[RMDB]
RNA sequence: GGGAACGACUCGAGUAGAGUCGAAAACGCCGUCAGGUGGUCGGCAGCCCCAUGCGCCGCGAACCCGUCUUAAGCACCUUGUGUUUCUGGGGUGAGCCUGCUGGAAACAGGCACCGAGAGCAGGGGUGGUUCAAUGGCUGGUAAUGGCAUACAGAUAGCUAUUUACUCGUUUCGACGAGUAAAUAGCAAAAGAAACAACAACAACAAC
Reactivity to 2A3 in 0.01 (KOAc 150mM, MgCl2 10mM, bicine 150mM(pH8.5), 24C), signal-to-noise 2, nucleotides 027 to 156: c070g000c060c020g000u030c050a060g070g250u080g080g040u130c020g000g050c030a130g000c000c000c000c010a060u140g020c100g000c030c000g010c060g110a080a140c000c000c000g010u040c060u070u060a180a100g010c040a040c010c010u060u090g160u000g000u210u300u110c020u030g180g000g000g030u030g000a010g020c010c010u010g000c000u240g050g110a060a050a010c020a010g010g000c010a000c000c000g110a000g000a000g000c030a000g010g000g010g010u010g000g050u020u010c090a050a100u160g000g000c010u010g020g040u040a020a020u020g000g000c000a040u120a110c070a030g250a130u300a070
Chemical mapping of a 207-nucleotide RNA with 2A3.
The RNA was probed in 150 mM KOAc, 10 mM MgCl2 and 150 mM bicine (pH 8.5) at 24 C.
2A3 adducts were read by reverse transcription with SuperScript II with manganese.
Reactivities are given for positions 27 through 156.